RNA sequence: GGGAACGACUCGAGUAGAGUCGAAAACUAUCUAGUUUUCUAGAUAGAGCAUGCUUUUGCAUGCGAACCUGCGUAUGACACAUCCAGCUUUUUUUGCUCGCAGGGGCUCAUCCGAGAAAGGACUUUUGUCCGAUCGGAUGUGUCAAGGAUGGUCACAAAUUUAUACCCGUUUCGACGGGUAUAAAUUAAAAGAAACAACAACAACAAC
Reactivity to DMS in 0.01 (KOAc 150mM, MgCl2 10mM, bicine 150mM(pH8.5), 24C), signal-to-noise 1, nucleotides 027 to 156: c020u000a020u000c000u000a020g010u000u000u000u000c010u000a020g000a040u000a010g010a200g030c020a150u020g010c020u000u000u000u010g020c020a040u000g000c000g000a040a030c010c020u000g020c020g010u000a120u020g010a110c060a130c020a050u000c020c010a140g000c030u090u000u000u000u000u000u000g000c030u040c040g010c050a080g020g000g000g010c000u000c000a000u000c000c000g010a060g020a120a160a280g000g010a020c000u010u000u010u020g000u000c000c030g010a200u000c010g010g000a020u000g010u000g000u010c010a060a090g000g010a040u020g020g000u000c040a110c090a100
Reactivity to 2A3 in 0.01 (KOAc 150mM, MgCl2 10mM, bicine 150mM(pH8.5), 24C), signal-to-noise 5, nucleotides 027 to 156: c000u000a000u010c000u000a010g060u140u120u300u280c000u010a000g010a000u000a000g000a010g000c000a000u000g000c010u120u160u300u300g000c000a000u020g000c020g040a030a050c000c000u010g000c010g030u090a110u100g010a010c030a010c000a160u000c000c000a020g010c040u080u100u110u110u100u300u270g000c000u030c010g000c010a000g020g000g000g000c010u000c010a000u000c000c000g000a000g050a080a110a060g010g000a000c020u160u260u210u300g020u000c000c000g010a010u000c000g000g000a000u000g010u000g010u000c010a000a000g000g000a000u000g000g010u010c010a000c030a030
The data come from the RNA Mapping Database (RMDB), library OK3TST. Chemical mapping of a 207-nucleotide RNA with DMS and 2A3. High 2A3 reactivity points to a flexible backbone, as in loops and unpaired stretches. The RNA was probed in 150 mM KOAc, 10 mM MgCl2 and 150 mM bicine (pH 8.5) at 24 C. The 2A3 profile rests on 2,664 reads. Values are in units of 0.01, from 0 to 300, in steps of 10.